An RNA of 207 nucleotides, treated with DMS and 2A3 and read out base by base. Source: RMDB library RNAMAK, as collected in RNAgym. Reactivities are rounded to 0.1 and cut off at 0 and 3. The DMS profile rests on 2,992 reads.
RNA sequence: GGGAACGACUCGAGUAGAGUCGAAAAUAUCGAACGCUGGGCCACUCUUCGAUAUAAGGGAGCUCUCUGAAGCGCGCACGGAGAGCUUUGAUCUUAUAUUCGAAACGUGAGUGGCCUGUGCUGAAGCGCGCACGGCAACCGAAAGGUGCGGGGCAAACAUACACAGUUGGUUCGCCAACUGUGUAUGAAAAGAAACAACAACAACAAC
Reactivity to DMS in 0.01 (KOAc 150mM, MgCl2 10mM, bicine 150mM(pH8.5), 24C), signal-to-noise 1, nucleotides 027 to 156: u010a080u020c070g000a070a020c040g010c040u010g020g010g020c000c010a010c000u000c010u000u000c060g040a050u000a000u000a020a050g010g010g010a030g010c000u010c000u020c000u000g010a070a000g010c020g040c000g050c030a300c030g030g020a040g010a020g030c000u010u010u000g010a050u010c000u000u000a030u000a020u010u010c040g050a010a170a090c140g000u000g000a050g070u000g000g030c000c000u020g020u020g010c020u000g000a040a040g020c010g030c020g020c020a280c030g020g000c020a030a040c000c020g030a120a150a180g020g010u000g040c050g000g020g010g050c140a050a070a190
Reactivity to 2A3 in 0.01 (KOAc 150mM, MgCl2 10mM, bicine 150mM(pH8.5), 24C), signal-to-noise 1, nucleotides 027 to 156: u150a050u070c060g020a080a030c000g020c000u020g020g000g000c020c000a020c000u030c020u130u210c000g000a000u000a010u000a010a010g000g000g000a010g020c010u000c010u050c000u000g030a150a040g010c000g000c000g000c030a020c010g030g000a000g000a000g000c000u110u040u010g010a010u010c000u020u000a000u040a030u190u300c070g050a160a080a040c070g040u090g010a000g000u000g000g000c000c010u010g000u000g000c030u010g000a120a030g000c010g000c000g010c000a020c000g030g000c010a000a000c020c030g020a130a080a020g000g000u010g030c060g000g010g040g080c080a080a080a090